An RNA of 177 nucleotides, treated with DMS and read out base by base. Source: RMDB library OK2TST, as collected in RNAgym. DMS adducts were read by reverse transcription with MarathonRT.
[RMDB]
RNA sequence: GGGAACGACUCGAGUAGAGUCGAAAAACUGUGACACCCAUGCUGUGAGCAGCGUGCCCGCCUUCCCCACUGACGACGUCACACACCGUCCAGUUCGCGUCAUGGGUUGUGUUUUGCACCAUCCUCAUCCAGCGGGAGUGUUCGCACUCCCGCUGGAAAAAGAAACAACAACAACAAC
Reactivity to DMS in 0.01 (KOAc 150mM, MgCl2 10mM, bicine 150mM(pH8.5), 24C), signal-to-noise 1, nucleotides 027 to 126: a040c090u000g010u000g020a120c010a100c050c020c040a120u020g020c120u000g000u000g000a070g000c100a100g060c080g010u000g000c070c070c180g050c040c070u000u000c030c010c000c040a060c170u020g010a060c020g010a060c070g010u000c100a120c150a090c090a080c040c030g030u000c050c090a130g000u010u000c060g000c060g030u000c010a010u010g010g000g000u000u020g010u020g010u000u000u000u000g020c070a080c030c010a160u020c060c030u000c080a060